Structure probing data (DMS and 2A3) for a 207-nucleotide construct. The DMS profile rests on 6,692 reads. For DMS the reverse transcriptase was MarathonRT.
RNA sequence: GGGAACGACUCGAGUAGAGUCGAAAACCUUAUCGUUCGCGAUAAGGGGGUAUCCUAAGUCAACAACAGCUCACGUAACUUCAACAGCUCGGAAACGAGACAUGAAGGAGAAGUGAGACAUGUUGAUAUGGAGAAUCGUAGGAUUUCGAUCCUACAAUAAUAAGUGACUCUUCGGAGUCACUUAUUAAAAAGAAACAACAACAACAAC
Reactivity to DMS in 0.01 (KOAc 150mM, MgCl2 10mM, bicine 150mM(pH8.5), 24C), signal-to-noise 4, nucleotides 027 to 156: c000c000u000u000a010u000c000g050u000u010c290g050c020g010a020u000a010a020g020g000g010g010g010u010a120u000c010c010u020a060a290g010u010c020a040a020c010a060a090c040a180g030c040u000c000a020c010g010u010a150a300c010u000u010c010a040a100c040a210g000c010u000c000g010g010a160a110a250c000g030a050g010a070c080a300u000g020a020a030g010g030a090g010a130a270g010u000g000a020g010a020c070a160u000g020u000u030g010a020u000a300u000g010g010a100g000a120a100u000c090g010u010a000g000g000a060u000u000u000c210g010a060u020c000c000u000a010c020a050a150
Reactivity to 2A3 in 0.01 (KOAc 150mM, MgCl2 10mM, bicine 150mM(pH8.5), 24C), signal-to-noise 4, nucleotides 027 to 156: c000c000u000u010a010u000c010g030u040u050c280g000c020g140a000u000a000a000g020g010g000g060g020u040a070u040c000c000u050a200a060g020u000c010a010a000c000a030a030c020a060g030c000u010c000a000c010g020u020a040a030c010u010u020c020a060a080c020a230g030c010u000c010g000g120a110a070a050c000g020a020g070a070c020a110u100g000a000a000g030g020a020g010a010a000g010u000g000a000g040a020c000a010u020g000u000u010g010a000u010a040u100g010g020a050g120a130a160u190c150g000u000a010g010g010a030u110u090u190c280g070a030u000c000c000u010a000c000a000a000

Reactivities are given for positions 27 through 156. The 2A3 profile rests on 3,663 reads.